Conditions: 150 mM KOAc, 10 mM MgCl2 and 150 mM bicine (pH 8.5), 24 C. This 177-nucleotide RNA was probed chemically with 2A3 and DMS. For 2A3 the reverse transcriptase was SuperScript II with manganese. The DMS profile rests on 92,870 reads.
[RMDB]
RNA sequence: GGGAACGACUCGAGUAGAGUCGAAAAGAUGGGAGCAUGGUUCUGGAAGAGAGUGUUGAGACGGAUAUAUUCUUUGUAUUCGUCCUUGCUCUUGACGUGGGCGGAUGCGUUAGCCAGGGCGUCGAUGUAAUGUAAUGAUCUUCGGAUCAUUACAUUAAAAAGAAACAACAACAACAAC
Reactivity to 2A3 in 0.01 (KOAc 150mM, MgCl2 10mM, bicine 150mM(pH8.5), 24C), signal-to-noise 9, nucleotides 027 to 126: g080a050u100g010g020g010a050g040c070a070u090g070g030u100u050c030u060g040g050a140a020g030a020g010a010g020u070g190u190u100g090a220g000a080c010g000g010a000u010a000u000a020u100u170c150u110u180u100g010u010a010u000u010c000g000u000c000c000u000u060g000c000u000c000u010u040g020a020c010g020u060g020g010g030c070g020g030a050u090g030c020g030u030u060a020g010c020c020a020g010g020g000c020g030u070c050g030a030u110g070
Reactivity to DMS in 0.01 (KOAc 150mM, MgCl2 10mM, bicine 150mM(pH8.5), 24C), signal-to-noise 9, nucleotides 027 to 126: g010a120u010g010g000g000a100g020c070a050u000g010g010u000u000c040u010g010g010a120a230g000a020g000a020g010u000g010u000u000g000a160g010a010c000g010g000a010u000a010u000a050u010u010c260u010u000u000g020u000a010u000u000c000g010u000c000c010u000u000g000c010u000c010u000u000g000a120c090g020u000g000g000g010c080g000g000a080u000g010c060g010u000u000a090g010c040c050a060g000g010g010c060g010u000c060g000a110u010g010